RNA sequence: GGGAACGACUCGAGUAGAGUCGAAAACAACAACAUGGGAAGCAUCCUGGCCCUCCUCGGCCGCUACAGGGAGGCCUUCGACUGGUUCGUACAGGCACUCAGAAUCCAGCCGGGCUAUGAGCGCGCACCUAGCGUUACAAUUCGUUGUAACGCUAGGAAAAGAAACAACAACAACAAC
Reactivity to 2A3 in 0.01 (KOAc 150mM, MgCl2 10mM, bicine 150mM(pH8.5), 24C), signal-to-noise 4, nucleotides 027 to 126: c040a010a010c010a010a000c010a140u120g050g050g000a020a030g050c020a060u060c020c010u050g050g010c030c020c010u040c010c000u020c020g050g000c040c020g030c060u110a040c050a050g040g040g020a030g020g020c010c010u060u080c030g060a070c030u070g050g040u100u050c030g030u090a050c040a100g010g110c020a040c060u030c020a030g040a070a020u000c020c010a030g170c090c110g010g000g010c010u030a050u100g020a020g000c030g010c000g030c020a040
Reactivity to DMS in 0.01 (KOAc 150mM, MgCl2 10mM, bicine 150mM(pH8.5), 24C), signal-to-noise 5, nucleotides 027 to 126: c050a090a060c090a040a060c080a080u020g000g030g000a070a090g000c080a100u000c030c040u000g020g010c030c020c040u000c040c020u000c080g020g010c020c030g010c070u000a060c110a100g000g000g000a090g010g020c020c020u000u010c060g000a060c070u010g010g020u000u010c040g010u010a080c160a090g000g010c050a050c050u000c050a080g000a080a120u000c040c020a100g020c080c070g010g000g020c040u000a080u000g010a040g000c020g000c060g010c170a160